Record summary
The record gives the reactivity of an RNA of 177 nucleotides to DMS and 2A3. As a SHAPE reagent, 2A3 marks flexible, mostly unpaired nucleotides at the ribose 2'-OH. DMS adducts were read by reverse transcription with MarathonRT. Values cover nucleotides 27 to 126. For DMS, 728 sequencing reads were counted. Source: RMDB library OK2TST, as collected in RNAgym. The 2A3 profile rests on 1,051 reads.
[RMDB]
RNA sequence: GGGAACGACUCGAGUAGAGUCGAAAACACCCAUGGAAUGAUGAGCUCGACAAAUACUUGGGUGGUGCUAAGUACAAUACUGCGCUAGUGCAAGUGUAUGAUGGUACACGUGAUUUACCAUACCAUACGAGUCAGACGAUUUCGAUCGUCUGACUCGAAAAGAAACAACAACAACAAC
Reactivity to DMS in 0.01 (KOAc 150mM, MgCl2 10mM, bicine 150mM(pH8.5), 24C), signal-to-noise 1, nucleotides 027 to 126: c180a040c060c010c000a130u010g000g030a140a070u000g000a100u000g080a040g010c040u000c070g010a110c080a060a110a070u000a040c050u000u000g000g030g000u000g000g010u000g010c030u000a060a100g030u000a070c120a040a070u000a150c040u000g000c010g030c080u000a070g040u040g030c060a050a040g000u000g000u000a030u000g020a100u020g000g010u010a050c130a080c070g010u000g000a060u010u000u010a030c030c010a100u000a150c130c000a070u000a050
Reactivity to 2A3 in 0.01 (KOAc 150mM, MgCl2 10mM, bicine 150mM(pH8.5), 24C), signal-to-noise 1, nucleotides 027 to 126: c060a000c030c000c030a090u070g000g080a190a040u080g050a090u020g010a040g050c080u040c040g040a050c040a000a110a020u060a040c030u010u020g090g030g000u090g000g040u020g040c000u100a090a010g000u000a050c050a140a180u000a160c020u040g000c000g080c160u100a010g050u000g220c030a060a090g000u010g020u030a070u070g090a050u120g000g030u000a040c010a000c050g110u020g090a180u030u040u080a090c010c020a000u010a090c060c000a000u060a110